Structure probing data (2A3 and DMS) for a 177-nucleotide construct.
High 2A3 reactivity points to a flexible backbone, as in loops and unpaired stretches.
Values cover nucleotides 27 to 126.
The reactions ran in a buffer of 150 mM KOAc, 10 mM MgCl2 and 150 mM bicine (pH 8.5), at 24 C.
For DMS, 2,684 sequencing reads were counted.
It was measured as part of the RMDB library OK2TST.
[RMDB]
RNA sequence: GGGAACGACUCGAGUAGAGUCGAAAAAGGGUGGGCUUGUCAACACCGUCGUACGGAUCGAUGAGCGUGAACUCGGACCGUACCCGGCACAGUGUUUUGCCGUAGGGCAUACGUAUCGCGUACACCAAGGUGUAAGUCGAUUCGUCGACUUACACCUAAAAGAAACAACAACAACAAC
Reactivity to 2A3 in 0.01 (KOAc 150mM, MgCl2 10mM, bicine 150mM(pH8.5), 24C), signal-to-noise 2, nucleotides 027 to 126: a050g080g010g010u100g000g010g010c040u090u110g110u050c020a040a040c040a060c050c020g050u070c060g030u050a050c010g000g010a140u060c020g050a080u060g020a040g050c090g030u120g060a040a040c020u000c000g010g010a040c020c010g000u000a020c010c020c010g010g050c060a050c010a100g060u050g060u110u110u130u090g020c000c000g010u040a040g060g090g000c050a040u040a050c040g020u090a110u140c090g000c070g040u030a010c030a030c080c030a060
Reactivity to DMS in 0.01 (KOAc 150mM, MgCl2 10mM, bicine 150mM(pH8.5), 24C), signal-to-noise 3, nucleotides 027 to 126: a070g000g000g010u000g000g010g000c080u000u000g020u010c110a070a090c120a130c010c050g020u000c140g020u000a060c010g000g000a130u010c030g010a090u010g010a100g010c100g010u020g020a090a100c070u000c010g000g000a050c030c000g020u000a000c010c080c000g010g030c080a070c070a120g020u010g000u000u000u000u000g010c000c010g010u000a080g000g000g000c010a060u000a040c060g000u000a060u010c110g000c140g020u010a040c060a050c050c080a120